[RMDB]
RNA sequence: GGGAACGACUCGAGUAGAGUCGAAAAAUUCCAUUCAGUAGUCCCGGACGAAUUAGAAUUUAACGUACGGUUUGGACAUAAUGGAGAAAUAAAAUAUUGCUCUUUUUGCAGCGGAGCUGAACUUUAUCCCGUUGCUCAAAUUCGUUUGAGCAACGGGAAAAGAAACAACAACAACAAC
Reactivity to 2A3 in 0.01 (KOAc 150mM, MgCl2 10mM, bicine 150mM(pH8.5), 24C), signal-to-noise 1, nucleotides 027 to 126: a000u000u000c000c000a000u040u040c080a000g000u070a000g000u000c000c020c010g000g050a000c000g200a030a150u250u070a210g120a050a070u050u050u050a180a000c000g000u000a000c000g110g170u000u300u110g180g000a000c000a020u170a000a000u000g120g120a000g100a000a060a000u250a000a030a030a000u160a050u080u260g150c000u000c000u000u080u000u070u170g220c210a010g070c020g000g010a020g000c000u000g020a000a020c030u130u000u000a080u050